[RMDB]
RNA sequence: GGGAACGACUCGAGUAGAGUCGAAAAUGAUCCAGGGAUCCUAUGCCAUGGUCCUCCUCACGCCCGAGUACCUCAUAGGGGUGCGGGAUCCCCGGGGGAUACGGCCUCUCUGUCUCGGCGAGAUCGAACUACUACUGCUAUUCGUAGCAGUAGUAGUAAAAGAAACAACAACAACAAC
Reactivity to DMS in 0.01 (KOAc 150mM, MgCl2 10mM, bicine 150mM(pH8.5), 24C), signal-to-noise 6, nucleotides 027 to 126: u010g000a050u000c020c040a140g000g000g000a050u000c060c080u000a070u010g020c050c060a140u000g000g000u000c010c020u000c010c020u010c070a150c160g010c050c010c030g010a070g000u000a040c040c070u000c060a150u010a110g000g010g000g020u000g010c040g010g000g000a060u000c010c010c010c080g010g000g000g010g000a050u010a060c140g010g000c010c040u000c030u000c070u000g000u000c030u000c030g010g010c050g000a090g010a060u000c050g010a120
Reactivity to 2A3 in 0.01 (KOAc 150mM, MgCl2 10mM, bicine 150mM(pH8.5), 24C), signal-to-noise 2, nucleotides 027 to 126: u100g000a030u020c020c020a030g000g020g010a040u050c010c040u110a060u230g050c020c030a070u100g040g020u020c010c000u010c000c010u060c010a040c070g030c000c040c000g000a030g020u040a060c020c020u070c030a110u200a130g000g060g000g000u110g270c050g010g040g040a030u060c010c000c000c010g070g030g020g010g000a010u030a060c010g000g010c020c000u010c000u020c010u030g050u060c010u010c040g060g010c050g020a070g010a050u070c030g020a030
The record gives the reactivity of an RNA of 177 nucleotides to DMS and 2A3. The RNA was probed in 150 mM KOAc, 10 mM MgCl2 and 150 mM bicine (pH 8.5) at 24 C. The DMS profile rests on 11,283 reads. DMS adducts were read by reverse transcription with MarathonRT.